[RMDB]
RNA sequence: GGGAACGACUCGAGUAGAGUCGAAAAAUUCCGAGGAUGUUUCCCAGCCAGGGAUUUUCAUCCUCGAGUUUCUUGAUGGUUCUCCUGCUCUUCCGGAGCUUUCUUUCGAGGUCUUCCGCGUCUUUUCCUAGGCCAUUGUUCGCAAUGGCCAAAAGAAACAACAACAACAAC
Reactivity to 2A3 in 0.01 (KOAc 150mM, MgCl2 10mM, bicine 150mM(pH8.5), 24C), signal-to-noise 4, nucleotides 027 to 129: a010u100u050c060c030g000a010g020g010a010u010g020u000u000u000c000c010c030a000g160c160c140a120g000g040g000a010u080u040u010u120c000a010u000c000c020u000c000g000a030g000u000u000u000c000u010u040g060a090u140g080g010u070u020c030u020c010c000u070g010c010u020c010u070u040c060c020g020g000a030g000c000u010u080u000c020u010u070u020c000g050a030g030g060u010c000u030u030c030c000g030c030g020u030c040u030u090u020u000c010c010u020a040
Reactivity to DMS in 0.01 (KOAc 150mM, MgCl2 10mM, bicine 150mM(pH8.5), 24C), signal-to-noise 4, nucleotides 027 to 129: a030u060u030c040c010g040a030g000g010a000u000g020u000u000u000c070c000c010a100g010c300c280a120g030g000g000a000u020u020u010u020c010a000u000c010c020u020c010g010a110g000u010u010u000c040u030u020g020a160u010g000g000u070u000c060u030c050c000u000g040c030u020c070u050u010c060c030g030g000a150g050c130u010u020u010c010u030u010u040c020g000a080g030g010u030c000u000u000c040c030g050c110g040u000c070u000u020u000u060c010c010u020a000

This 170-nucleotide RNA was probed chemically with 2A3 and DMS. Conditions: 150 mM KOAc, 10 mM MgCl2 and 150 mM bicine (pH 8.5), 24 C. It was measured as part of the RMDB library 15KLIB.